[RMDB]
RNA sequence: GGGAACGACUCGAGUAGAGUCGAAAAUGAUCGAGAGAUCUAACGAUGUACGCGAGUCAAACGCACAGACUCGAGCGAAAGCUCGGUCGAAAGACCGCGUACAUCGGUCGGCAAGUGUGAAGUCAAACGUCAGUACGUGAUUCGUCACGUACUGACGAAAAGAAACAACAACAACAAC
Reactivity to 2A3 in 0.01 (KOAc 150mM, MgCl2 10mM, bicine 150mM(pH8.5), 24C), signal-to-noise 2, nucleotides 027 to 126: u070g010a020u010c020g010a010g000a010g030a080u000c010u030a070a020c000g030a000u000g010u020a010c000g010c010g040a080g020u000c030a060a100a000c110g050c030a050c010a090g030a010c020u060c220g000a010g020c000g050a080a000a010g020c000u000c010g000g020u000c000g030a010a000a000g010a010c010c000g000c000g010u010a000c000a000u000c000g000g020u040c010g030g010c020a070a130g080u050g030u060g170a060a040g020u080c070a070a060a040
Reactivity to DMS in 0.01 (KOAc 150mM, MgCl2 10mM, bicine 150mM(pH8.5), 24C), signal-to-noise 3, nucleotides 027 to 126: u010g030a030u010c000g010a240g000a220g000a020u000c000u020a060a090c010g020a000u000g000u000a010c000g000c000g000a100g030u010c000a070a080a110c240g030c140a060c210a180g000a000c010u010c030g020a010g010c010g020a140a110a100g020c000u010c000g010g000u000c010g000a080a080a070g000a020c000c000g000c010g020u000a000c000a000u000c010g010g000u000c070g010g000c030a080a100g000u020g000u000g010a120a110g000u000c050a030a090a190